RNA sequence: GGGAACGACUCGAGUAGAGUCGAAAAGAUAUGGACCUAAAUCUUCGUAAGGGCCAUAGCAACAGCCUGUGACUCGGAAACGAGUCCAGGACAUGCUAUGGCCCUUACGAAGAUUAGGUCCUAAGUCGAUAUCACAUAAGUUCGCUUAUGUGAUAUCAAAAGAAACAACAACAACAAC
Reactivity to DMS in 0.01 (KOAc 150mM, MgCl2 10mM, bicine 150mM(pH8.5), 24C), signal-to-noise 4, nucleotides 027 to 126: g010a100u010a300u000g000g000a010c000c000u000a030a060a110u000c000u000u000c000g010u000a010a020g020g000g010c010c010a010u000a000g000c000a050a100c300a250g000c010c000u000g010u020g010a010c000u010c000g000g000a140a110a220c010g010a020g020u000c000c000a000g000g000a010c100a090u000g010c000u000a000u000g000g000c000c000c000u000u000a000c000g000a000a000g010a000u000u000a000g000g000u000c000c000u000a010a060g020u010c090

Structure probing data (DMS) for a 177-nucleotide construct. The DMS profile rests on 8,530 reads. The data come from the RNA Mapping Database (RMDB), library TTRINS. The reactions ran in a buffer of 150 mM KOAc, 10 mM MgCl2 and 150 mM bicine (pH 8.5), at 24 C.